Overview: Chemical mapping of a 207-nucleotide RNA with 2A3. Conditions: 150 mM KOAc, 10 mM MgCl2 and 150 mM bicine (pH 8.5), 24 C. The data come from the RNA Mapping Database (RMDB), library RNAMAK.
[RMDB]
RNA sequence: GGGAACGACUCGAGUAGAGUCGAAAACUCCUUUCGAGGAGGCUUUCACCUUUGUGCUUGACAUCGAUCAGCUCUACCCACCGCUUAAUUCCCAUUGGGAAUACUAAGCGAGGAGCUGGGAGUCAAGCACUCUGGUAUCCGGCUGGUUCGCCAGCAAUUGUUCAUGCAUGUUCGCAUGCAUGAACAAAAAAGAAACAACAACAACAAC
Reactivity to 2A3 in 0.01 (KOAc 150mM, MgCl2 10mM, bicine 150mM(pH8.5), 24C), signal-to-noise 1, nucleotides 027 to 156: c000u010c000c000u030u070u130c240g090a030g000g010a000g020g020c030u090u140u130c090a030c000c000u000u010u030g000u000g000c000u010u000g010a020c020a300u030c080g200a190u060c010a040g020c000u000c000u040a140c110c080c070a040c080c000g000c040u030u000a030a020u140u010c000c030c110a230u180u300g000g000g000a000a000u070a120c110u010a000a010g010c000g000a020g010g000a000g010c010u000g000g000g010a010g010u000c000a000a000g010c000a000c000u000c000u000g010g000u020a080u000c060c000g210g000c020u010g060g000u080u030c220g010c140c010a000g140c010a010a110